Chemical mapping of a 207-nucleotide RNA with DMS and 2A3. For DMS the reverse transcriptase was MarathonRT. The DMS profile rests on 2,298 reads. Source: RMDB library OK3TST, as collected in RNAgym. The reactions ran in a buffer of 150 mM KOAc, 10 mM MgCl2 and 150 mM bicine (pH 8.5), at 24 C.
RNA sequence: GGGAACGACUCGAGUAGAGUCGAAAAGCGGCUCCGGGAGUAGACGGAUACAGCGUCGGCAACAAAUACCUGUCACGACCACUAUACGGAGAGCAGUCGAAAUACUGGAAAUGGGUUGCGGACUCCAUUCGGGGGAGGAUCGGCCGGUGAAGAUACACUAUGCUAAUUUCUUCGGAAAUUAGCAUAGAAAAGAAACAACAACAACAAC
Reactivity to DMS in 0.01 (KOAc 150mM, MgCl2 10mM, bicine 150mM(pH8.5), 24C), signal-to-noise 1, nucleotides 027 to 156: g030c030g000g020c010u000c010c020g020g000g040a160g070u000a140g020a120c010g000g010a160u000a040c050a080g030c070g020u000c040g030g030c140a090a100c080a070a060a180u000a010c040c040u010g030u020c020a090c050g020a000c030c020a070c050u010a150u020a080c060g000g020a090g000a050g010c020a080g000u000c040g000a120a080a110u000a140c040u000g030g000a090a170a070u010g030g000g010u000u010g000c040g070g020a080c010u000c020c010a120u000u000c070g080g010g030g010g010a040g020g000a110u000c080g010g020c010c010g010g000u000g010a080a020g010a200u010a070c060a070
Reactivity to 2A3 in 0.01 (KOAc 150mM, MgCl2 10mM, bicine 150mM(pH8.5), 24C), signal-to-noise 2, nucleotides 027 to 156: g040c040g050g050c020u000c020c030g030g060g010a040g000u080a050g010a060c030g040g030a110u060a120c080a060g050c040g040u030c040g030g000c070a050a020c020a060a150a030u180a100c010c020u040g040u060c030a010c090g030a000c040c000a040c070u140a070u080a140c050g040g000a040g020a020g060c010a020g050u040c030g030a020a050a040u120a080c050u080g050g030a020a100a110u060g010g050g020u030u050g010c000g020g040a030c000u000c020c020a010u090u080c060g080g020g020g000g020a020g000g000a040u040c010g010g000c010c000g020g010u020g050a010a020g040a030u120a050c060a000